Source: RMDB library RNAMAK, as collected in RNAgym. This 207-nucleotide RNA was probed chemically with DMS and 2A3. DMS adducts were read by reverse transcription with MarathonRT. Conditions: 150 mM KOAc, 10 mM MgCl2 and 150 mM bicine (pH 8.5), 24 C. Reactivities are given for positions 27 through 156. 2A3 adducts were read by reverse transcription with SuperScript II with manganese. For DMS, 2,031 sequencing reads were counted.
RNA sequence: GGGAACGACUCGAGUAGAGUCGAAAACGCUCGUUCGCGAGCGGAUUAAUCCUAAGUCGCACACACUACGGGAGUACGAUAAGUGUCGGAAACGACACUUUUGACGUACGAGGAUCGUAGUGGGUGCGAUAUGGAACAGGUCACUCUUCGGAGUGAAGUAGGUUUAACACUUCGGUGUUAAACCUACAAAAGAAACAACAACAACAAC
Reactivity to DMS in 0.01 (KOAc 150mM, MgCl2 10mM, bicine 150mM(pH8.5), 24C), signal-to-noise 1, nucleotides 027 to 156: c000g000c010u010c010g000u000u000c270g080c000g000a010g000c010g010g010a040u000u010a090a120u010c020c000u000a110a300g000u000c000g000c000a010c000a050c000a010c000u000a020c040g000g000g000a130g000u000a010c000g030a160u000a030a010g020u000g020u000c010g020g050a140a180a300c000g000a030c000a000c000u000u000u010u010g010a260c170g050u010a030c020g000a230g020g010a100u000c010g000u030a030g020u000g000g000g050u010g020c010g020a000u000a000u010g030g000a050a190c160a170g000g000u000c010a010c010u000c000u000u010c220g070g000a040g030u010g010a010a070
Reactivity to 2A3 in 0.01 (KOAc 150mM, MgCl2 10mM, bicine 150mM(pH8.5), 24C), signal-to-noise 2, nucleotides 027 to 156: c010g010c010u000c010g040u080u060c280g020c020g110a000g010c000g000g000a020u050u220a030a120u020c010c020u060a140a000g010u000c000g000c000a000c000a000c000a000c010u000a000c000g000g000g020a020g000u020a000c030g040a040u020a070a020g000u000g010u000c020g010g060a110a050a050c000g000a000c010a010c000u000u000u010u030g110a000c010g000u010a000c000g000a100g000g010a020u000c000g000u000a000g000u000g000g010g000u000g000c010g000a000u010a000u010g020g000a050a080c060a180g110g120u060c010a000c010u000c000u050u200c270g190g000a010g010u010g000a020a030